[RMDB]
RNA sequence: GGGAACGACUCGAGUAGAGUCGAAAAUCUAUGGUCUUCGGACCAUAGAAAAUAAGAAUCGGAAGCAUCAGAACCGAGACAAACAUGCAAACGCGAAAGCGAAAACAAUCCAGUUCGCUGGAUUGAAGAUGUUACCAUAGUUCGCUAUGGUAACAUCAAAAGAAACAACAACAACAAC
Reactivity to 2A3 in 0.01 (KOAc 150mM, MgCl2 10mM, bicine 150mM(pH8.5), 24C), signal-to-noise 5, nucleotides 027 to 126: u020c000u000a000u000g000g000u010c010u020u060c270g080g000a000c000c000a000u000a000g000a000a010a000a010u120a020a020g090a020a090u040c010g000g020a090a020g050c030a060u100c060a060g060a130a060c010c010g020a020g030a060c090a020a110a010c020a010u120g030c000a090a110a040c030g010c010g040a100a030a000g020c010g070a050a010a000a050c000a000a010u000c000c000a000g020u050u040c170g040c050u010g000g020a020u000u010g000a020a010
Reactivity to DMS in 0.01 (KOAc 150mM, MgCl2 10mM, bicine 150mM(pH8.5), 24C), signal-to-noise 4, nucleotides 027 to 126: u000c000u000a000u000g000g000u000c000u000u020c210g030g000a040c000c000a000u000a010g010a010a030a060a100u000a070a140g000a100a190u000c010g010g000a120a160g000c030a030u000c080a110g010a080a050c040c010g010a050g000a140c140a060a030a110c150a050u010g010c050a060a100a200c030g030c000g030a030a070a190g000c020g000a080a050a120a170c010a020a000u000c000c000a010g020u000u010c220g020c010u000g000g000a030u000u000g000a050a080
The record gives the reactivity of an RNA of 177 nucleotides to 2A3 and DMS. The DMS profile rests on 3,152 reads. For 2A3 the reverse transcriptase was SuperScript II with manganese. Source: RMDB library M2PK50, as collected in RNAgym.